[RMDB]
RNA sequence: GGGAACGACUCGAGUAGAGUCGAAAAAAAAGAUAUGGACGUGAACUACUUCGAAACUAGUCGAAGAACUUAGGUCGGAAACGACCUAAGGGAGACUACCGAGUAGAAGCACGUCCUAAGUCAAAAAGGUUAUACUGAAGUUCGCUUCAGUAUAACCAAAAGAAACAACAACAACAAC
Reactivity to 2A3 in 0.01 (KOAc 150mM, MgCl2 10mM, bicine 150mM(pH8.5), 24C), signal-to-noise 1, nucleotides 027 to 126: a020a010a080a050g030a020u090a060u090g000g020a000c000g000u010g040a190a130c010u040a020c000u220u300c000g050a050a060a060c070u020a010g000u000c050g290a300a120g050a150a000c010u000u010a000g000g030u020c020g020g020a070a040a030c000g000a000c000c010u000a000a000g000g000g000a030g000a000c000u010a020c220c060g010a000g000u010a010g000a000a040g020c000a010c020g010u000c000c000u000a000a000g000u010c020a000a190a000a010a120
Reactivity to DMS in 0.01 (KOAc 150mM, MgCl2 10mM, bicine 150mM(pH8.5), 24C), signal-to-noise 2, nucleotides 027 to 126: a070a010a040a200g000a030u000a300u010g010g010a020c000g000u010g010a040a140c010u000a100c010u010u000c120g030a140a200a160c260u010a000g000u010c010g000a060a280g020a130a060c000u000u000a010g000g010u000c000g000g000a030a100a060c010g000a020c000c000u000a000a000g000g000g000a030g010a020c000u000a020c190c040g000a000g010u010a020g010a180a090g030c010a010c010g040u000c000c000u010a000a020g000u010c000a030a040a060a080a250
Background: Conditions: 150 mM KOAc, 10 mM MgCl2 and 150 mM bicine (pH 8.5), 24 C. This 177-nucleotide RNA was probed chemically with 2A3 and DMS. The 2A3 profile rests on 2,751 reads.